[RMDB]
RNA sequence: GGGAACGACUCGAGUAGAGUCGAAAAUAAAUGGCGCGGGAUGGUAUACUAUACAAGCGUAUGGUUCAAAAAGAUACUUUGAAUUAAGAAGUACAAUAAAGUUAACUUCAUUAGACAAAAAGAAAAAGGUAUAAUGCAAAUUCGUUUGCAUUAUACCAAAAGAAACAACAACAACAAC
Reactivity to DMS in 0.01 (KOAc 150mM, MgCl2 10mM, bicine 150mM(pH8.5), 24C), signal-to-noise 2, nucleotides 027 to 126: u060a040a070a120u020g000g030c010g020c030g000g000g010a050u020g010g020u040a100u030a030c100u000a070u000a040c060a160a120g000c150g050u000a010u020g000g000u010u000c080a030a030a080a100a050g000a080u010a100c060u000u000u010g000a080a100u050u020a060a070g000a020a030g010u000a050c070a050a070u020a050a110a120g030u020u020a020a020c040u000u000c000a060u010u020a050g010a100c070a010a050a030a080a090g020a040a100a060a050a140
Reactivity to 2A3 in 0.01 (KOAc 150mM, MgCl2 10mM, bicine 150mM(pH8.5), 24C), signal-to-noise 3, nucleotides 027 to 126: u120a000a070a030u050g040g000c040g040c020g030g050g030a030u040g070g000u090a050u030a170c010u030a020u000a090c040a210a020g030c020g080u040a040u030g040g000u010u070c100a040a110a030a000a000g060a030u130a090c000u050u070u110g040a040a030u130u130a140a050g000a030a000g000u010a050c030a040a070u210a300a130a010g030u070u140a100a000c000u020u000c010a100u000u030a010g030a030c070a010a140a030a000a010g170a080a100a080a000a000
An RNA of 177 nucleotides, treated with DMS and 2A3 and read out base by base. DMS adducts were read by reverse transcription with MarathonRT. The data come from the RNA Mapping Database (RMDB), libraries RFM100 and RFMREP.